[RMDB]
RNA sequence: GGGAACGACUCGAGUAGAGUCGAAAACUCGGCGACCGACGAGGCGCUGCGGCCAAUGGGUCGUGCCACCUCGGGUGUGCAGGGCAUGCGGUUCAAUAUCGACGACCGGCUGCUGUCGCUGAACGUCUGGCAAACUUCCGUUCGCGGAAGUUUGCCAAAAAGAAACAACAACAACAAC
Reactivity to 2A3 in 0.01 (KOAc 150mM, MgCl2 10mM, bicine 150mM(pH8.5), 24C), signal-to-noise 2, nucleotides 027 to 126: c030u000c000g010g060c000g030a060c020c000g010a040c010g010a000g000g010c000g020c050u100g010c000g000g000c000c020a270a300u300g210g000g030u020c060g020u010g060c000c000a070c010c010u060c000g040g070g100u090g020u110g000c000a030g000g090g050c010a150u260g040c010g000g000u070u040c090a150a020u130a050u300c110g170a070c050g070a110c030c000g090g000c000u000g010c000u000g050u160c000g030c000u000g020a070a040c060g020u000c030
The data come from the RNA Mapping Database (RMDB), library OK1LIB.
An RNA of 177 nucleotides, treated with 2A3 and read out base by base.
Values are in units of 0.01, from 0 to 300, in steps of 10.
For 2A3 the reverse transcriptase was SuperScript II with manganese.